[RMDB]
RNA sequence: GGGAACGACUCGAGUAGAGUCGAAAAUCUGCAAUCUUCGGAUUGCAGAAAAUACGGAUCCAUACGGUUCCAUACGGAUCCAUACGGAUCCAUACGGAUCCAAAACGUACCUCUUCGGAGGUACGAACCUGGAAUCAAACUUCGGUUUGAUUCCAGGAAAAGAAACAACAACAACAAC
Reactivity to DMS in 0.01 (KOAc 150mM, MgCl2 10mM, bicine 150mM(pH8.5), 24C), signal-to-noise 1, nucleotides 027 to 126: u000c020u000g020c000a000a010u000c030u000u000c290g010g010a000u000u000g000c000a020g010a020a020a100a050u040a030c110g000g040a010u000c000c000a050u020a070c120g000g000u000u020c000c020a220u000a020c200g020g000a010u000c000c000a110u030a030c230g000g010a000u000c010c010a120u010a030c170g000g000a020u000c000c000a170a050a160a230c020g020u020a000c000c000u000c000u000u000c120g000g010a020g010g040u000a000c010g000a000a010
Reactivity to 2A3 in 0.01 (KOAc 150mM, MgCl2 10mM, bicine 150mM(pH8.5), 24C), signal-to-noise 1, nucleotides 027 to 126: u010c010u000g000c000a000a000u010c000u020u020c060g140g010a000u000u000g010c010a010g010a000a000a000a000u110a020c050g010g020a000u000c010c020a010u030a070c020g130g000u060u000c030c010a010u020a080c080g000g010a000u000c000c000a000u080a040c100g000g000a000u000c000c010a000u120a070c110g010g020a010u000c030c000a030a020a000a030c010g010u000a000c000c000u040c010u070u080c210g110g000a000g010g040u000a000c000g000a000a010

Overview:
Chemical mapping of a 177-nucleotide RNA with DMS and 2A3. It was measured as part of the RMDB library M2PK50. For 2A3 the reverse transcriptase was SuperScript II with manganese.